[RMDB]
RNA sequence: GGGAACGACUCGAGUAGAGUCGAAAAGCAAUUGCAGAACACUUCAAUUCAGCAGUAUAUUCACUUCCACCAGAUCCCAAGCACUUUGAUGGUUAUCAGCAACAGGAAGUUGUGAUUAUGGAUGAUCUGUCGUAAGAGCAUUCGUGCUCUUACGACAAAAAGAAACAACAACAACAAC
Reactivity to 2A3 in 0.01 (KOAc 150mM, MgCl2 10mM, bicine 150mM(pH8.5), 24C), signal-to-noise 3, nucleotides 027 to 126: g050c010a030a070u080u040g020c010a010g040a130a030c120a030c050u060u080c030a040a120u000u070c000a070g000c000a010g070u040a050u020a020u240u030c020a000c020u110u030c020c010a020c000c010a000g000a130u030c000c020c000a000a000g070c040a050c070u010u100u250g040a070u060g030g060u030u060a020u070c010a020g000c010a000a090c030a100g070g000a060a130g030u030u000g020u010g030a120u060u140a070u300g090g000a030u030g010a030u060c040
Reactivity to DMS in 0.01 (KOAc 150mM, MgCl2 10mM, bicine 150mM(pH8.5), 24C), signal-to-noise 3, nucleotides 027 to 126: g000c140a070a010u030u000g020c040a070g020a070a010c140a110c190u030u010c100a110a130u010u040c100a080g020c050a040g000u000a160u030a070u000u000c050a060c070u000u010c050c000a220c060c070a020g010a130u000c010c050c010a060a080g020c050a030c010u000u020u010g040a050u070g010g000u000u050a040u030c130a040g000c070a020a140c110a020g000g000a010a140g010u000u000g030u000g000a120u020u040a060u040g000g040a110u010g000a020u000c070
Annotation:
The record gives the reactivity of an RNA of 177 nucleotides to 2A3 and DMS. Values cover nucleotides 27 to 126. For DMS the reverse transcriptase was MarathonRT. For 2A3, 1,011 sequencing reads were counted.